[RMDB]
RNA sequence: GGGAACGACUCGAGUAGAGUCGAAAAACUUUGAUGGCGGUACUAUGAAUUGAUGCAAGGUGUGGAGCGACCUUAAACAGUUCUGGUGGUGCUCUGAAUUGAGUGCUCUACUGAGAUUAUAAAAUAGCAUGCAUAGAGUGCUUCGGCACUCUAUGAAGGUCCUGAUAUUCUUCGGAAUAUCAGGACCAAAAGAAACAACAACAACAAC
Reactivity to 2A3 in 0.01 (KOAc 150mM, MgCl2 10mM, bicine 150mM(pH8.5), 24C), signal-to-noise 2, nucleotides 027 to 156: a000c070u070u100u170g050a030u070g010g010c010g000g050u040a010c030u050a090u160g030a080a060u110u040g080a080u090g060c030a030a010g010g000u030g010u060g050g020a030g020c010g000a000c000c000u030u070a090a030a050c020a020g020u050u010c020u060g000g050u030g010g070u010g000c030u010c040u060g110a100a070u140u030g020a000g030u060g000c010u000c010u030a020c010u050g030a010g020a110u110u130a100u220a150a060a130a050u190a030g120c060a040u140g020c000a000u010a000g000a010g010u000g020c010u000u010c020g050g000c000a000c000u000c000u010a010u000g010a010a010